This 177-nucleotide RNA was probed chemically with 2A3 and DMS.
[RMDB]
RNA sequence: GGGAACGACUCGAGUAGAGUCGAAAAGAUAUGGACGAUCUAUGAACUACAGCAUUCGGAAACGAGGGCUGCAUAGAGUCGUCCUAAGUCAAACUCACUGGUACCCGUUCGCGGGUACCAGUGAGAAUCACUUAAAUAACUUCGGUUAUUUAAGUGAAAAAGAAACAACAACAACAAC
Reactivity to 2A3 in 0.01 (KOAc 150mM, MgCl2 10mM, bicine 150mM(pH8.5), 24C), signal-to-noise 2, nucleotides 027 to 126: g010a010u050a070u150g010g010a000c010g010a000u000c000u020a010u020g040a060a120c080u200a060c300a000g010c010a030u030u030c020g040g000a060a080a060c020g010a010g000g010g010c000u000g000c000a010u010a000g040a050g250u060c000g000u040c000c000u000a030a010g030u000c030a040a040a130c000u000c000a000c020u000g000g020u030a020c040c070c000g030u070u100c300g030c020g170g020g020u020a000c000c020a020g010u010g000a000g000a000a010
Reactivity to DMS in 0.01 (KOAc 150mM, MgCl2 10mM, bicine 150mM(pH8.5), 24C), signal-to-noise 3, nucleotides 027 to 126: g010a030u000a300u000g000g000a060c010g000a100u000c000u000a010u000g000a070a070c080u010a300c010a010g000c010a050u020u010c010g000g000a100a130a210c010g000a010g010g000g020c000u000g020c000a010u000a010g000a040g000u000c000g000u000c000c000u000a020a080g000u000c080a090a100a200c010u000c000a000c010u000g000g020u000a020c000c000c010g000u000u020c210g030c020g000g010g000u000a010c020c010a000g010u000g000a000g000a020a090
The reactions ran in a buffer of 150 mM KOAc, 10 mM MgCl2 and 150 mM bicine (pH 8.5), at 24 C. The 2A3 profile rests on 4,267 reads. For DMS, 2,697 sequencing reads were counted.